[RMDB]
This 207-nucleotide RNA was probed chemically with DMS and 2A3. Values are in units of 0.01, from 0 to 300, in steps of 10. 2A3 adducts were read by reverse transcription with SuperScript II with manganese. DMS adducts were read by reverse transcription with MarathonRT. The reactions ran in a buffer of 150 mM KOAc, 10 mM MgCl2 and 150 mM bicine (pH 8.5), at 24 C.

RNA sequence: GGGAACGACUCGAGUAGAGUCGAAAAGCCUCUCCAGCGCAGCCGACGUCGAUGGCAAAGGGAGGCGGGUGCAGGACUACGAGAAGACUAGCCUGAAGCCGUAUAUUGAUUAUUUCCGCUCGUUCGUGGCGGGGCUGCUUAAGGCAGAGAGAGCGGGCGUAUCCAUUUUCUUCGGAAAAUGGAUACGAAAAGAAACAACAACAACAAC
Reactivity to DMS in 0.01 (KOAc 150mM, MgCl2 10mM, bicine 150mM(pH8.5), 24C), signal-to-noise 1, nucleotides 027 to 156: g000c060c010u000c030u010c020c010a190g000c140g010c040a110g010c000c000g000a100c080g040u000c060g050a110u020g000g030c040a170a140a080g040g040g010a000g000g020c020g020g040g000u000g000c040a090g030g020a100c020u030a100c060g010a280g040a130a130g020a140c080u000a090g000c000c010u010g010a120a150g040c010c000g060u020a060u000a130u000u040g010a160u000u000a300u000u030u000c040c000g000c010u000c000g100u010u010c080g000u010g060g060c020g010g020g000g060c010u000g010c020u000u030a080a100g010g010c020a000g020a100g010a240g000a030g020c010g020g040g010
Reactivity to 2A3 in 0.01 (KOAc 150mM, MgCl2 10mM, bicine 150mM(pH8.5), 24C), signal-to-noise 2, nucleotides 027 to 156: g020c000c010u000c000u000c020c030a080g040c030g000c060a000g040c050c020g060a230c070g200u100c050g070a100u150g060g000c090a060a030a000g000g000g000a030g000g010c010g030g030g040u100g050c030a010g010g070a200c010u070a050c090g080a050g050a250a010g090a080c040u000a010g020c000c000u010g020a070a010g030c060c030g000u040a060u000a050u170u150g130a120u100u190a040u080u050u040c000c000g000c030u030c040g020u110u180c080g020u050g010g000c060g010g000g000g000c000u020g000c000u090u130a120a020g090g040c040a000g000a010g000a000g000a010g000c060g030g040g000

Source: RMDB library OK3TST, as collected in RNAgym.